[RMDB]
RNA sequence: GGGAACGACUCGAGUAGAGUCGAAAAUAUAACAUCAUUCAAGCGGACAUGAAUGGUAAUUGGUAUGAGCGUAUCAACUUCUUUGGCAUGCGCAUCAAUGAUGGGAUUUAUGACGCUAAAAACCAAAGUGUCGUGUCCUAUUCGUAGGACACGACACAAAAGAAACAACAACAACAAC
Reactivity to 2A3 in 0.01 (KOAc 150mM, MgCl2 10mM, bicine 150mM(pH8.5), 24C), signal-to-noise 1, nucleotides 027 to 126: u050a000u030a060a010c000a000u130c000a000u070u000c050a020a010g100c010g080g060a120c060a070u020g050a030a000u060g060g040u090a060a070u010u050g000g000u060a050u110g190a170g060c160g010u040a000u010c000a050a140c090u100u000c040u000u070u090g010g000c030a020u080g030c080g070c060a000u000c010a050a020u000g000a030u040g040g080g000a000u040u040u000a150u170g030a040c050g020c150u160a060a030a000a090a060c030c020a000a050a050
About this RNA: This 177-nucleotide RNA was probed chemically with 2A3. For 2A3 the reverse transcriptase was SuperScript II with manganese. The 2A3 profile rests on 603 reads. The data come from the RNA Mapping Database (RMDB), library OK2TST. The RNA was probed in 150 mM KOAc, 10 mM MgCl2 and 150 mM bicine (pH 8.5) at 24 C.